[RMDB]
RNA sequence: GGGAACGACUCGAGUAGAGUCGAAAAUGAUUUAUUGAAGGACAUUAAAUUUGUUAUACCUGCUCUACAGCAUGCAUUUAUGAAACAUAAGGGCGGUGAUUCAACUGACUUCAUAGCCCUCAUUAUGGGAGUACGGUGUUCGCACCGUACAAAAGAAACAACAACAACAAC
Reactivity to 2A3 in 0.01 (KOAc 150mM, MgCl2 10mM, bicine 150mM(pH8.5), 24C), signal-to-noise 2, nucleotides 027 to 129: u100g010a010u080u040u050a060u070u110g040a080a000g060g060a030c040a040u050u080a030a030a070u140u120u070g070u060u030a050u020a050c020c000u020g000c030u000c010u020a040c060a020g020c020a030u070g020c020a020u040u030u080a130u180g080a080a040a030c030a020u110a060a040g000g000g000c000g000g000u000g060a050u060u050c030a030a060c060u110g020a000c000u040u010c040a000u040a010g010c000c000c000u000c000a060u010u160a020u070g060g010g000a050
Reactivity to DMS in 0.01 (KOAc 150mM, MgCl2 10mM, bicine 150mM(pH8.5), 24C), signal-to-noise 5, nucleotides 027 to 129: u020g010a020u040u030u030a050u020u010g040a080a060g020g020a130c000a060u000u100a020a050a050u000u010u010g000u030u020a090u030a090c080c020u050g020c060u010c030u010a120c130a070g030c090a060u070g060c160a000u010u040u040a010u050g020a070a120a080c070a030u020a080a050g000g000g000c020g030g000u000g010a000u010u000c080a160a100c160u060g030a080c010u020u000c010a010u020a160g000c020c020c030u020c120a070u020u030a010u010g050g000g000a030